[RMDB]
RNA sequence: GGGAACGACUCGAGUAGAGUCGAAAACUGUCAUCGCUUCUUCACGGAGCACCUACUGUGUGCCAGGCGGGUGCUGGGGCUGCAGCGCAGAGAGCAGUCAGGGCUUGGUGGUCUGGCCCGCAAAGAGUCAGCAUGUGAAUGUCUCUCCAUGCGAUGAACUGACUUUUAAUUUCGAUUAAAAGUCAGUAAAAGAAACAACAACAACAAC
Reactivity to 2A3 in 0.01 (KOAc 150mM, MgCl2 10mM, bicine 150mM(pH8.5), 24C), signal-to-noise 6, nucleotides 027 to 156: c040u050g040u070c010a030u010c030g010c010u070u020c020u100u100c060a020c080g080g040a090g040c030a040c010c000u120a130c070u040g010u010g010u030g070c020c000a030g020g020c050g020g110g030u130g080c010u040g010g010g070g010c000u010g000c010a110g080c050g010c210a050g130a010g010a030g140c000a000g010u050c010a010g060g000g000c010u080u130g100g050u150g080g000u190c000u000g000g010c000c040c010g000c000a070a110a020g080a020g030u100c070a020g010c040a060u120g040u050g060a070a030u100g110u030c040u000c000u000c150c040a030u080g000c000g010a010u020g010a010
Reactivity to DMS in 0.01 (KOAc 150mM, MgCl2 10mM, bicine 150mM(pH8.5), 24C), signal-to-noise 2, nucleotides 027 to 156: c050u010g030u000c020a060u000c030g030c010u000u000c030u000u000c050a230c050g000g000a100g010c020a010c000c000u000a050c100u000g010u000g030u010g010c020c030a140g010g000c040g020g020g030u010g010c020u010g040g030g010g020c020u000g020c010a060g040c100g030c090a170g010a150g030a190g000c010a040g010u010c020a100g020g010g020c010u000u000g080g020u020g080g020u000c010u000g000g000c010c010c000g000c020a060a170a110g010a100g010u000c040a230g010c030a050u010g020u000g020a040a160u000g010u000c050u000c010u000c000c010a070u000g010c000g020a130u010g000a090